This 177-nucleotide RNA was probed chemically with DMS and 2A3.

RNA sequence: GGGAACGACUCGAGUAGAGUCGAAAAACCCGGUGGACAAACUCGAAGUCAUUGUGGACCGAAUGAGGCUCAAUAACGAGAUUAGCGACCUCGAAGGCCUGCGCAAAUAUUUCCACUCCUUCCCGGGCGGAUCAUUAUACUUCGGUAUAAUGAUCCGAAAAGAAACAACAACAACAAC
Reactivity to DMS in 0.01 (KOAc 150mM, MgCl2 10mM, bicine 150mM(pH8.5), 24C), signal-to-noise 4, nucleotides 027 to 126: a110c000c010c000g000g040u010g030g020a080c120a080a120a120c040u000c020g000a160a080g000u010c020a070u030u050g000u000g020g000a130c150c040g020a100a090u040g000a040g000g000c060u010c060a050a160u020a050a100c040g000a080g010a130u000u000a070g020c220g020a100c050c000u000c020g000a190a180g000g000c010c010u010g030c060g000c140a070a070a070u020a080u020u030u000c030c020a070c050u020c030c020u000u000c020c000c010g000g000g020
Reactivity to 2A3 in 0.01 (KOAc 150mM, MgCl2 10mM, bicine 150mM(pH8.5), 24C), signal-to-noise 9, nucleotides 027 to 126: a000c010c000c000g000g020u060g030g030a040c070a080a190a040c070u060c100g070a110a020g040u030c040a060u070u100g020u080g070g030a070c020c010g050a050a060u160g020a040g020g010c040u040c090a040a120u120a100a020c100g020a020g020a150u040u060a030g030c020g040a070c010c010u000c020g030a070a020g010g000c010c010u070g010c050g000c020a000a070a030u130a070u070u070u010c010c010a030c030u010c000c020u020u020c000c000c000g000g030g010
Source: RMDB library OK1LIB, as collected in RNAgym.